[RMDB]
RNA sequence: GGGAACGACUCGAGUAGAGUCGAAAAAGGAUCCAUUGACCGGCUUCAUCUACGCGUUCGACGACAUGCUGGCGCGCCACAACGCGAGCUGGGCGGAUCUCGCGGCGGUGGUCACCGUCGGCGGUGGUCGCAGUGAACGUUUCGACGUUCACUGCGAAAAAGAAACAACAACAACAAC
Reactivity to DMS in 0.01 (KOAc 150mM, MgCl2 10mM, bicine 150mM(pH8.5), 24C), signal-to-noise 2, nucleotides 027 to 126: a050g000g010a080u000c000c010a150u000u010g050a000c090c070g000g030c000u010u010c050a030u010c060u050a070c080g010c050g030u060u000c070g010a240c090g000a210c050a010u030g000c070u000g030g000c000g000c120g000c060c070a060c090a040a090c040g000c080g030a060g000c040u010g080g000g000c060g030g010a060u000c010u000c030g040c000g000g000c080g000g000u010g000g000u020c050a120c190c010g000u000c050g020g040c080g000g010u010g040g050
Reactivity to 2A3 in 0.01 (KOAc 150mM, MgCl2 10mM, bicine 150mM(pH8.5), 24C), signal-to-noise 3, nucleotides 027 to 126: a030g100g000a060u050c020c040a090u080u120g100a060c010c000g000g040c030u080u100c030a090u030c020u060a030c050g020c050g040u080u100c070g060a040c000g060a020c050a080u200g010c010u030g050g000c020g000c000g010c040c010a050c000a100a000c030g010c000g000a000g000c010u110g130g000g040c010g030g030a050u010c000u000c020g030c000g000g030c070g040g050u040g010g060u090c040a000c020c030g000u000c010g030g000c010g020g030u070g000g030